[RMDB]
RNA sequence: GGGAACGACUCGAGUAGAGUCGAAAAGAUAUGGAGCGUGAUGGACAUGCCACCAUGUCGGAAACGACAUCCCUGGCAACAGCCAUACGCUCCUAAGUCAAAACUGGAUGUGUUCGCACAUCCAGAACGAAUAGUACAACUUCGGUUGUACUAUUCGAAAAGAAACAACAACAACAAC
Reactivity to DMS in 0.01 (KOAc 150mM, MgCl2 10mM, bicine 150mM(pH8.5), 24C), signal-to-noise 8, nucleotides 027 to 126: g000a010u000a070u010g000g000a020g010c000g010u000g010a040u000g000g010a030c040a300u010g020c000c000a010c130c300a000u000g000u000c000g020g000a020a020a050c010g010a010c000a010u000c170c120c210u000g020g010c010a090a050c210a140g010c000c000a000u000a010c020g010c000u000c000c000u000a000a040g000u000c010a120a060a140a210c010u010g000g000a010u000g020u000g010u000u010c290g010c000a010c000a000u000c000c000a010g010a050a120
Reactivity to 2A3 in 0.01 (KOAc 150mM, MgCl2 10mM, bicine 150mM(pH8.5), 24C), signal-to-noise 5, nucleotides 027 to 126: g000a000u010a010u060g000g000a000g010c020g010u160g290a070u020g040g000a050c170a300u300g000c010c000a020c010c020a010u010g010u000c000g000g000a010a010a000c010g000a000c000a010u070c080c040c040u030g090g000c220a300a070c070a300g000c000c000a000u000a010c010g000c000u000c000c000u010a000a000g000u000c010a000a000a130a190c000u000g000g000a010u010g060u010g040u110u150c300g040c110a000c000a010u000c000c000a000g000a010a000

An RNA of 177 nucleotides, treated with DMS and 2A3 and read out base by base.
The RNA was probed in 150 mM KOAc, 10 mM MgCl2 and 150 mM bicine (pH 8.5) at 24 C.
2A3 adducts were read by reverse transcription with SuperScript II with manganese.
The data come from the RNA Mapping Database (RMDB), library TTRDES.
DMS adducts were read by reverse transcription with MarathonRT.